[RMDB]
RNA sequence: GGGAACGACUCGAGUAGAGUCGAAAAGAUAUGGACUUGCACGUGCGCUCCCAUCGAUCUCGGAAACGAGGGAGGGAGCGAACUACACGGAUAAGUCCUAAGUCAAAGAGUUCCUUCGGGAACUCAAGAAUACAAUCAACUUCGGUUGAUUGUAUUCAAAAGAAACAACAACAACAAC
Reactivity to 2A3 in 0.01 (KOAc 150mM, MgCl2 10mM, bicine 150mM(pH8.5), 24C), signal-to-noise 4, nucleotides 027 to 126: g050a010u070a050u160g000g010a000c010u010u010g020c090a010c070g010u030g020c010g010c000u000c000c010c010a110u300c030g050a050u020c010u000c010g020g040a110a080a080c010g000a010g000g020g000a040g000g000g000a000g000c000g000a000a010c020u070a010c010a000c010g020g000a030u020a060a000g000u000c010c000u010a090a020g060u020c050a090a080a100g000a010g000u000u000c000c000u000u050c220g060g000g000a010a000c000u010c000a000a010
Reactivity to DMS in 0.01 (KOAc 150mM, MgCl2 10mM, bicine 150mM(pH8.5), 24C), signal-to-noise 8, nucleotides 027 to 126: g000a030u000a300u000g000g010a010c000u000u000g010c300a040c010g000u000g000c000g000c000u000c010c000c010a220u010c200g010a040u000c000u000c000g000g000a120a070a110c010g010a010g000g010g000a020g010g000g000a010g000c000g010a010a010c060u010a300c020a010c010g010g010a070u000a010a010g000u000c000c000u000a040a080g000u000c030a100a120a180g000a010g010u000u000c000c000u000u000c190g020g010g000a000a000c000u000c000a020a050

The data come from the RNA Mapping Database (RMDB), library TTRDEL.
An RNA of 177 nucleotides, treated with 2A3 and DMS and read out base by base.
Reactivities are given for positions 27 through 126.
Reactivities are rounded to 0.1 and cut off at 0 and 3.